The record gives the reactivity of an RNA of 207 nucleotides to 2A3 and DMS.
[RMDB]
RNA sequence: GGGAACGACUCGAGUAGAGUCGAAAAGACGCCUUUAGAAGAAGAGGCUAGGGGGUAUUCCGGUGUGGGAUACUUAGUAAUAUGCAACGCUAAUUGCAUAAGAGUGUAGGACGGAAUUUACAGUCUUUAGAGAUAAGCACGUUCGCGUGCUUAUCAACCUCACGAAAAGAUUCGUCUUUUCGUGAGGAAAAGAAACAACAACAACAAC
Reactivity to 2A3 in 0.01 (KOAc 150mM, MgCl2 10mM, bicine 150mM(pH8.5), 24C), signal-to-noise 5, nucleotides 027 to 156: g050a030c040g010c000c010u060u080u120a210g030a270a020g020a020a010g010a050g030g010c040u040a060g040g010g000g030g020u040a030u030u020c040c060g100g040u180g020u170g070g030g020a020u030a080c010u020u020a020g010u050a030a120u020a040u090g000c000a010a010c060g020c210u140a100a090u080u020g000c000a000u010a030a050g060a030g060u100g020u050a030g040g040a010c030g000g040a030a030u110u100u070a140c040a040g040u030c010u020u090u050a110g020a000g000a070u000a000a000g000c000a010c000g010u040u080c130g040c010g100u010g000c000u000u000a000u000c000a000a000
Reactivity to DMS in 0.01 (KOAc 150mM, MgCl2 10mM, bicine 150mM(pH8.5), 24C), signal-to-noise 1, nucleotides 027 to 156: g010a110c030g020c020c040u000u000u000a100g010a130a170g000a110a100g020a100g020g020c040u010a100g010g000g020g030g010u000a050u000u010c000c020g010g010u010g010u000g030g040g000a040u000a020c060u000u010a090g030u000a110a170u010a040u010g010c050a010a020c080g050c160u010a060a140u000u010g000c000a060u000a000a130g010a090g020u010g020u010a030g020g010a050c010g020g000a100a070u000u000u000a090c030a140g010u000c050u000u020u000a120g010a170g020a020u010a000a010g020c000a020c000g000u000u010c300g020c020g020u000g020c000u000u010a000u000c010a010a040
The reactions ran in a buffer of 150 mM KOAc, 10 mM MgCl2 and 150 mM bicine (pH 8.5), at 24 C. In probing experiments dimethyl sulfate is read out at A N1 and C N3, which are open when not base-paired. 2A3 adducts were read by reverse transcription with SuperScript II with manganese.